[RMDB]
Structure probing data (DMS and 2A3) for a 207-nucleotide construct.
2A3 is a SHAPE reagent: it acylates the 2'-hydroxyl of flexible nucleotides of all four kinds.
RNA sequence: GGGAACGACUCGAGUAGAGUCGAAAAUAGGGGUGUGGAUGUAUGCUCUUUAUCCAACGUCUUCAUGGUUGAACUUAAGUGAUGCAGAAUCAUGGCAUAACCUGCAGAAAAAUGAAUGUCAGUCAUCUCUUGUAAGAGCUGCCCCAGGAAGAAAAGAGGAUACUGAACUUUUCGAAGUUCAGUAUCCAAAAGAAACAACAACAACAAC
Reactivity to DMS in 0.01 (KOAc 150mM, MgCl2 10mM, bicine 150mM(pH8.5), 24C), signal-to-noise 1, nucleotides 027 to 156: u000a090g030g000g120g090u000g030u000g010g000a100u000g050u040a050u020g020c050u000c010u010u000u000a180u020c090c020a080a070c090g040u000c020u000u000c050a110u020g000g020u000u000g020a100a080c090u000u000a100a050g020u000g000a050u010g040c000a110g000a150a090u000c060a110u030g020g020c080a100u000a090a020c050c030u020g000c000a160g000a030a070a040a040a070u000g020a130a110u030g000u000c020a080g030u030c040a040u000c050u000c020u000u000g000u010a050a080g000a110g000c060u020g030c080c100c020c020a220g000g000a020a020g020a070a070a030a080g010a220
Reactivity to 2A3 in 0.01 (KOAc 150mM, MgCl2 10mM, bicine 150mM(pH8.5), 24C), signal-to-noise 2, nucleotides 027 to 156: u150a030g020g010g010g000u050g040u060g080g060a050u060g020u170a110u130g020c000u040c000u040u080u060a070u050c050c000a020a040c050g080u020c010u200u100c180a120u110g040g000u030u020g050a080a030c050u050u090a090a060g010u020g060a050u040g030c000a010g090a090a060u080c100a070u130g060g000c010a010u030a090a040c000c030u050g000c030a030g100a030a090a010a020a040u110g050a080a010u040g020u100c010a010g030u040c000a020u000c040u020c000u030u130g060u050a050a020g000a010g020c000u050g000c010c000c000c010a020g090g050a030a040g000a050a090a040a030g170a020
The reactions ran in a buffer of 150 mM KOAc, 10 mM MgCl2 and 150 mM bicine (pH 8.5), at 24 C. For 2A3, 862 sequencing reads were counted. Source: RMDB library OK3TST, as collected in RNAgym. The DMS profile rests on 1,531 reads.